[RMDB]
RNA sequence: GGGAACGACUCGAGUAGAGUCGAAAACCUCCAGAGAAACCCUCUCCAACGAACAAAGAAGACCGCUGGGGCGCCAGGAAGAGUCCGUAGCGAUAGGAGGGGAUGCUAGGAGUCGGCGGCGACCGAAACGGAUAUACCUUCGGGUAUAUCAAAAGAAACAACAACAACAAC
Reactivity to 2A3 in 0.01 (KOAc 150mM, MgCl2 10mM, bicine 150mM(pH8.5), 24C), signal-to-noise 9, nucleotides 027 to 129: c010c000u000c010c020a040g020a010g050a180a110a060c010c000c000u030c000u000c010c000a080a060c070g140a080a040c070a140a140a070g140a070a020g080a100c030c020g000c030u020g010g000g020g020c040g060c040c050a060g080g080a100a080g040a040g070u000c020c010g140u090a010g010c020g030a060u090a100g010g010a000g000g000g010g000a010u050g020c000u050a060g010g020a040g040u050c020g020g020c000g050g020c020g020a040c000c000g020a040a040a010c070g040
Reactivity to DMS in 0.01 (KOAc 150mM, MgCl2 10mM, bicine 150mM(pH8.5), 24C), signal-to-noise 9, nucleotides 027 to 129: c050c010u020c000c020a110g030a060g020a080a110a120c070c010c010u020c000u030c000c030a120a110c110g030a150a100c130a110a090a100g070a140a060g020a080c130c040g030c040u000g030g010g020g060c050g020c070c060a080g020g040a050a090g010a140g030u010c010c020g050u040a040g000c020g050a110u050a100g020g020a030g030g010g010g010a030u030g000c000u040a050g000g040a040g000u000c070g030g030c050g050g020c050g000a100c050c040g020a040a060a070c170g040